[RMDB]
RNA sequence: GGGAACGACUCGAGUAGAGUCGAAAAGAUAUGGACAGGGACAUCGAUCUAAGGACUCGGAAACGAGUCUUAGGGAGUCCCGUCCUAAGUCAAAACAGUAUUAGGCUGUUCGCAGCCUAAUACUGAACGAUAAUAUGCCCUUCGGGGCAUAUUAUCGAAAAGAAACAACAACAACAAC
Reactivity to 2A3 in 0.01 (KOAc 150mM, MgCl2 10mM, bicine 150mM(pH8.5), 24C), signal-to-noise 2, nucleotides 027 to 126: g020a000u050a010u080g050g030a020c210a300g190g030g000a030c030a300u280c090g170a050u110c060u030a040a040g260g050a110c000u000c020g040g000a030a060a010c000g000a000g000u020c000u000u000a010g000g030g000a010g000u000c000c000c000g000u000c000c000u000a080a020g030u000c020a030a030a130a170c010a000g020u000a010u000u000a010g000g030c000u010g030u050u170c300g000c130a010g000c030c000u000a000a000u000a000c000u010g000a000a000
Reactivity to DMS in 0.01 (KOAc 150mM, MgCl2 10mM, bicine 150mM(pH8.5), 24C), signal-to-noise 2, nucleotides 027 to 126: g020a050u000a300u030g010g020a000c040a120g030g010g010a040c010a210u000c110g000a080u010c000u010a030a030g000g000a020c010u000c010g020g010a030a080a140c000g000a000g010u000c000u000u000a000g010g000g000a040g000u010c000c000c020g000u000c000c000u000a010a110g010u000c070a060a100a130a260c020a010g010u000a000u000u000a000g000g010c010u000g020u000u010c200g010c020a010g000c010c000u010a000a010u000a010c000u000g010a060a120

Structure probing data (2A3 and DMS) for a 177-nucleotide construct.
2A3 adducts were read by reverse transcription with SuperScript II with manganese.
The reactions ran in a buffer of 150 mM KOAc, 10 mM MgCl2 and 150 mM bicine (pH 8.5), at 24 C.
The DMS profile rests on 2,034 reads.
For 2A3, 3,697 sequencing reads were counted.
The data come from the RNA Mapping Database (RMDB), library TTRDEL.
DMS adducts were read by reverse transcription with MarathonRT.